RNA sequence: GGGAACGACUCGAGUAGAGUCGAAAAUGCAGCUAAGGGUUACAUUGCUGGAAUACAGAAUUUUAAGGAAACGCUGUAUUAUCAGAACAAUGUCUUUAUGUCUGAAGCUAAAUGCUGGGUGGAAACCGAAUAAGACACAGUUCGCUGUGUCUUAUUCAAAAGAAACAACAACAACAAC
Reactivity to DMS in 0.01 (KOAc 150mM, MgCl2 10mM, bicine 150mM(pH8.5), 24C), signal-to-noise 6, nucleotides 027 to 126: u000g010c050a030g010c030u000a050a100g000g000g000u000u010a090c020a010u000u000g010c000u010g000g000a020a010u000a010c000a010g010a040a070u000u010u000u020a100a200g020g010a050a030a070c300g010c000u010g010u000a000u000u000a090u000c000a010g000a100a130c020a010a000u000g010u000c110u000u000u000a040u020g000u010c020u000g000a120a030g010c040u010a050a090a090u010g000c020u000g010g000g000u000g000g000a090a070a060c130c080
Reactivity to 2A3 in 0.01 (KOAc 150mM, MgCl2 10mM, bicine 150mM(pH8.5), 24C), signal-to-noise 2, nucleotides 027 to 126: u050g010c000a010g000c010u040a030a030g060g020g020u060u080a020c000a010u010u000g000c010u010g010g020a010a000u010a000c000a000g030a020a040u040u030u060u150a250a080g220g050a060a020a010c070g000c010u000g010u000a010u000u020a070u050c000a000g020a070a070c010a030a000u010g020u030c030u080u120u040a080u120g090u050c020u030g010a050a010g020c020u050a100a070a030u120g010c010u030g020g040g020u050g040g000a060a030a010c050c030